[RMDB]
RNA sequence: GGGAACGACUCGAGUAGAGUCGAAAAGCAUCGACGACGGUCCUGCCAUGAGACCCUAACGAGGACAUGUCGCCUCGAAUGGCGUCGGGGAGCCGGCAGCUUACCCCAAGGAUGAGCGCCUAAUGCCUAUACCCGAUUCGCUUCGGCGAAUCGGGAAUGUAACUAAUGGAUUCGUCCAUUAGUUACAAAAAGAAACAACAACAACAAC
Reactivity to DMS in 0.01 (KOAc 150mM, MgCl2 10mM, bicine 150mM(pH8.5), 24C), signal-to-noise 1, nucleotides 027 to 156: g000c010a070u000c030g000a120c020g000a060c030g000g000u000c050c010u000g000c000c040a140u010g000a180g020a200c030c030c040u010a130a120c050g020a110g000g030a110c020a190u020g000u000c070g000c000c000u090c060g040a150a140u000g000g000c040g010u000c010g010g010g000g010a110g000c040c040g020g010c040a090g010c010u010u020a080c010c000c000c090a140a110g010g040a100u000g010a080g010c030g010c010c020u010a120a040u000g010c010c000u000a220u000a110c010c000c000g000a050u000u040c010g010c010u010u020c300g040g000c030g000a030a000u000c000g000g010g020a000a020
Reactivity to 2A3 in 0.01 (KOAc 150mM, MgCl2 10mM, bicine 150mM(pH8.5), 24C), signal-to-noise 4, nucleotides 027 to 156: g010c020a060u110c050g060a040c030g000a010c040g050g010u020c020c000u040g080c060c020a160u170g060a060g040a120c000c020c030u050a100a060c040g010a000g000g020a020c050a100u170g040u100c150g030c030c020u050c010g050a090a070u100g010g020c040g000u090c030g010g000g020g000a020g030c020c030g080g020c020a010g010c010u060u150a190c000c000c000c010a020a030g080g020a100u120g030a030g040c010g020c000c030u130a120a050u090g010c000c010u040a050u120a170c010c000c000g000a000u000u000c000g000c000u040u070c250g100g000c010g000a010a000u000c010g000g000g000a010a000

Structure probing data (DMS and 2A3) for a 207-nucleotide construct. For DMS the reverse transcriptase was MarathonRT. It was measured as part of the RMDB library M2RFPK. For 2A3 the reverse transcriptase was SuperScript II with manganese.